[RMDB]
RNA sequence: GGGAACGACUCGAGUAGAGUCGAAAAGGAAAGUAUGCGACCGGCUACAAGAAAGGGUUGAACUUGGUCUUUUUUAGCCACAAAGACGAGAAACCGCUUCGCCUUUGGAGUGUCGAAAAGUGUAUCGAAGAAAUCUCGUAGAUAUUUUAUCGGAUAAGCCUGCUAUUAUAUUCGUAUAAUAGCAGGCAAAAGAAACAACAACAACAAC
Reactivity to DMS in 0.01 (KOAc 150mM, MgCl2 10mM, bicine 150mM(pH8.5), 24C), signal-to-noise 2, nucleotides 027 to 156: g000g000a130a070a160g020u000a050u010g010c030g020a160c040c030g030g000c010u000a130c050a090a100g010a060a090a180g000g010g040u000u010g000a060a060c050u010u010g040g030u000c010u010u000u000u000u000u000a130g000c000c020a050c050a040a030a100g020a000c020g010a080g000a060a070a280c040c080g030c180u000u000c000g000c000c000u000u010u000g010g000a170g040u010g030u000c060g010a080a020a000a140g060u000g000u000a080u000c050g000a060a260g010a000a120a100u000c070u000c020g020u010a200g000a080u000a050u010u030u000u000a080u010c030g000g010a100u000a070a280
Reactivity to 2A3 in 0.01 (KOAc 150mM, MgCl2 10mM, bicine 150mM(pH8.5), 24C), signal-to-noise 1, nucleotides 027 to 156: g060g020a060a060a010g030u170a050u090g040c010g020a060c020c010g080g020c030u070a070c090a100a010g080a190a040a010g030g010g040u050u100g060a100a020c000u040u050g110g000u000c000u000u110u010u000u010u110a050g010c000c000a070c020a050a050a000g010a000c010g010a000g010a030a040a020c020c010g030c040u030u020c010g000c000c040u000u000u090g050g000a130g060u170g050u080c020g090a010a000a000a130g060u070g020u020a060u140c040g040a040a000g010a120a050a020u080c090u010c050g020u000a060g000a070u010a030u090u110u080u020a070u080c010g030g000a040u060a150a000
An RNA of 207 nucleotides, treated with DMS and 2A3 and read out base by base. The reactions ran in a buffer of 150 mM KOAc, 10 mM MgCl2 and 150 mM bicine (pH 8.5), at 24 C.